The data come from the RNA Mapping Database (RMDB), library TTRINS. The record gives the reactivity of an RNA of 177 nucleotides to DMS. DMS adducts were read by reverse transcription with MarathonRT.
[RMDB]
RNA sequence: GGGAACGACUCGAGUAGAGUCGAAAAGAUAUGGACACUAACAUAAUCCGAUUCCCUAGACAUGGUGGUUUCGGAAACGAAAUGAUCACCAACAGCUAGGAAUCGGAUUAUGUUAGUGUCCUAAGUCGAUAUCUUCUACCUUCGGGUAGAAGAUAUCAAAAGAAACAACAACAACAAC
Reactivity to DMS in 0.01 (KOAc 150mM, MgCl2 10mM, bicine 150mM(pH8.5), 24C), signal-to-noise 3, nucleotides 027 to 126: g010a100u010a300u000g000g020a030c000a000c010u000a010a000c000a000u000a010a010u000c010c000g000a010u000u000c290c060c040u000a010g000a040c130a270u000g010g030u010g000g010u000u000u020c000g010g000a100a080a210c010g020a010a120a110u010g000a100u010c000a020c020c010a030a100c300a220g020c020u000a000g000g000a000a020u000c000g010g010a010u000u000a000u000g000u000u000a000g000u000g000u000c000c010u000a020a070g000u000c130
Values cover nucleotides 27 to 126.